[RMDB]
RNA sequence: GGGAACGACUCGAGUAGAGUCGAAAAGAUAUGGAUCUUUAAAGCUUUUGACGCUCUAAGGGUCGGAAACGACCCGAAAGAGCGAUAAGCUUUAUGGAUCCUAAGUCAAAAUCUGUCUUCGGACAGACUCUAUAAUCCUCUUCGGAGGAUUAUAGAGAAAAGAAACAACAACAACAAC
Reactivity to DMS in 0.01 (KOAc 150mM, MgCl2 10mM, bicine 150mM(pH8.5), 24C), signal-to-noise 2, nucleotides 027 to 126: g000a040u000a300u030g000g000a010u000c000u000u000u000a010a000a010g000c000u010u010u000u020g040a300c070g020c000u000c000u010a080a300g000g000g020u000c000g020g010a070a100a210c000g020a010c000c000c000g000a050a100a020g000a020g050c010g050a020u000a030a030g020c000u000u000u000a000u010g000g020a020u000c000c000u000a000a090g000u000c030a100a040a050a180u000c000u000g010u000c000u000u020c200g030g000a020c010a000g000a040
Reactivity to 2A3 in 0.01 (KOAc 150mM, MgCl2 10mM, bicine 150mM(pH8.5), 24C), signal-to-noise 1, nucleotides 027 to 126: g010a000u100a030u190g000g000a000u000c010u020u030u030a010a000a000g000c010u000u100u150u210g220a160c040g000c000u000c010u000a030a110g020g000g000u010c000g050g000a050a010a010c010g000a010c000c000c000g010a020a070a010g000a000g010c010g000a000u000a000a000g000c000u000u000u000a020u010g010g020a000u000c000c000u010a090a010g070u010c030a010a020a040a300u030c010u010g000u000c000u020u070c300g060g000a000c000a000g010a010
Description: Conditions: 150 mM KOAc, 10 mM MgCl2 and 150 mM bicine (pH 8.5), 24 C. The record gives the reactivity of an RNA of 177 nucleotides to DMS and 2A3. The 2A3 profile rests on 2,905 reads. It was measured as part of the RMDB library TTRDES. Values are in units of 0.01, from 0 to 300, in steps of 10. DMS adducts were read by reverse transcription with MarathonRT. For DMS, 1,828 sequencing reads were counted.